[RMDB]
RNA sequence: GGGAACGACUCGAGUAGAGUCGAAAAUAGGCGAACGAGAGGCCCUCUCUUGUGCGGAGUUGUCACGCUGACACAAUUGUUAUGAUGUCCGAUUCCGGUAGCAUCGCGGCGAUGCUUUCAUAGGACAUCUUAUGAACCCAAGUGCUUCGGGGAAGCAGGGUAUAUUAAUAUUCGUAUUAAUAUACCCAAAAGAAACAACAACAACAAC
Reactivity to 2A3 in 0.01 (KOAc 150mM, MgCl2 10mM, bicine 150mM(pH8.5), 24C), signal-to-noise 3, nucleotides 027 to 156: u180a030g060g000c020g020a040a010c000g010a040g010a020g070g020c010c020c000u040c000u000c000u030u070g020u050g030c050g030g020a060g020u110u050g050u060c060a020c110g050c060u080g040a030c010a000c010a110a170u080u090g070u120u150a110u170g000a000u010g010u000c000c010g050a070u150u100c100c050g010g010u010a000g000c010a010u010c020g060c180g280g050c110g010a000u000g000c000u040u120u060c050a070u090a090g000g000a010c000a000u000c000u000u000a070u050g050a030a040c000c000c010a060a040g070u050g050c010u050u130c080g030g010g010g010a010a020g050c050a050
Reactivity to DMS in 0.01 (KOAc 150mM, MgCl2 10mM, bicine 150mM(pH8.5), 24C), signal-to-noise 4, nucleotides 027 to 156: u000a120g010g020c000g030a040a030c020g010a080g000a070g020g020c060c050c040u010c010u010c010u000u000g020u000g020c020g020g010a180g020u000u000g020u000c020a100c100g020c040u010g000a130c050a050c030a100a120u000u010g020u000u000a110u000g010a050u000g000u000c000c000g000a220u010u000c140c080g000g000u000a030g000c000a010u000c020g010c140g020g010c160g010a050u000g000c020u000u000u000c020a090u010a120g020g000a070c020a000u000c010u010u010a040u000g010a080a120c050c040c030a060a090g010u000g000c020u000u000c060g020g010g030g010a090a050g020c010a100
Source information:
Source: RMDB library OK3TST, as collected in RNAgym. Chemical mapping of a 207-nucleotide RNA with 2A3 and DMS. The DMS profile rests on 11,750 reads. Conditions: 150 mM KOAc, 10 mM MgCl2 and 150 mM bicine (pH 8.5), 24 C.